The record gives the reactivity of an RNA of 177 nucleotides to DMS and 2A3.
2A3 adducts were read by reverse transcription with SuperScript II with manganese.
For DMS, 10,639 sequencing reads were counted.
The data come from the RNA Mapping Database (RMDB), library OK2TRN.
The RNA was probed in 150 mM KOAc, 10 mM MgCl2 and 150 mM bicine (pH 8.5) at 24 C.

RNA sequence: GGGAACGACUCGAGUAGAGUCGAAAACGCGCUUGAAGAUGACAGCCGCUGUGAGGCUGGAGUUGCCCUGUUGCAUAGCAGGCGUGGAGCCAGUCCAUUCUGAGAUCCAGCCGUACAGGUGGGAGGCGACCUUAUGUACGUUCGCGUACAUAAGGUCAAAAGAAACAACAACAACAAC
Reactivity to DMS in 0.01 (KOAc 150mM, MgCl2 10mM, bicine 150mM(pH8.5), 24C), signal-to-noise 7, nucleotides 027 to 126: c080g010c070g010c030u000u000g020a080a100g020a100u000g010a140c110a110g010c010c030g020c040u000g020u000g000a080g010g000c000u000g000g000a060g010u000u000g010c110c010c020u000g010u000u000g010c210a080u000a070g010c010a030g010g010c090g030u000g010g000a100g010c110c090a090g000u000c040c080a070u000u000c080u010g000a170g010a120u000c010c000a020g010c000c000g000u000a050c040a030g010g020u010g010g000g010a110g000g020c130
Reactivity to 2A3 in 0.01 (KOAc 150mM, MgCl2 10mM, bicine 150mM(pH8.5), 24C), signal-to-noise 4, nucleotides 027 to 126: c030g020c010g000c050u050u080g080a080a020g040a120u130g020a070c030a030g050c030c020g020c050u050g030u060g050a070g020g000c000u000g020g000a020g030u170u260g040c020c000c010u020g070u140u120g130c150a130u180a120g000c010a000g010g020c020g020u040g020g020a020g110c100c020a030g100u030c030c000a060u180u080c040u130g100a070g000a120u010c000c010a000g000c010c010g030u050a030c030a040g010g050u070g080g020g020a050g040g030c040